[RMDB]
Source information
This 177-nucleotide RNA was probed chemically with 2A3 and DMS. The RNA was probed in 150 mM KOAc, 10 mM MgCl2 and 150 mM bicine (pH 8.5) at 24 C. DMS (dimethyl sulfate) methylates the pairing face of unpaired adenines and cytosines. The data come from the RNA Mapping Database (RMDB), library OK1LIB. Reactivities are rounded to 0.1 and cut off at 0 and 3.

RNA sequence: GGGAACGACUCGAGUAGAGUCGAAAAUAAUGCCGGCUGGGCGGAGCAAAGGCAGCACCGCAGUCCGGUGGGGGCUCGCCACGUGUGACUGCUGCGUUCGAGCCUCUGGUCCGUUCGGCUAAGGUGCGCAUGGGUCGGGCUUCGGCCCGAUCCAUGUAAAAGAAACAACAACAACAAC
Reactivity to 2A3 in 0.01 (KOAc 150mM, MgCl2 10mM, bicine 150mM(pH8.5), 24C), signal-to-noise 4, nucleotides 027 to 126: u180a000a070u160g020c000c000g000g000c000u000g010g000g020c010g010g000a050g060c000a010a010a010g010g000c000a000g000c010a000c000c010g000c010a000g010u010c010c010g000g000u010g000g000g000g030g120c050u030c020g070c010c000a010c030g180u090g060u130g020a010c000u000g010c020u030g020c050g010u000u010c010g040a020g000c000c000u000c000u000g030g090u000c010c000g000u000u000c010g000g000c000u010a030a010g000g000u030g010c060
Reactivity to DMS in 0.01 (KOAc 150mM, MgCl2 10mM, bicine 150mM(pH8.5), 24C), signal-to-noise 2, nucleotides 027 to 126: u020a080a050u010g000c010c010g010g000c000u000g020g000g000c010g000g000a000g010c000a000a040a030g000g010c000a300g000c220a020c010c050g000c020a000g000u020c000c000g010g000u010g010g000g020g010g010c080u010c090g010c000c000a010c010g000u040g060u080g000a010c020u000g010c000u030g000c150g000u000u000c050g000a150g010c010c000u000c060u010g000g000u000c000c020g000u010u010c010g010g000c000u010a030a050g000g000u010g010c140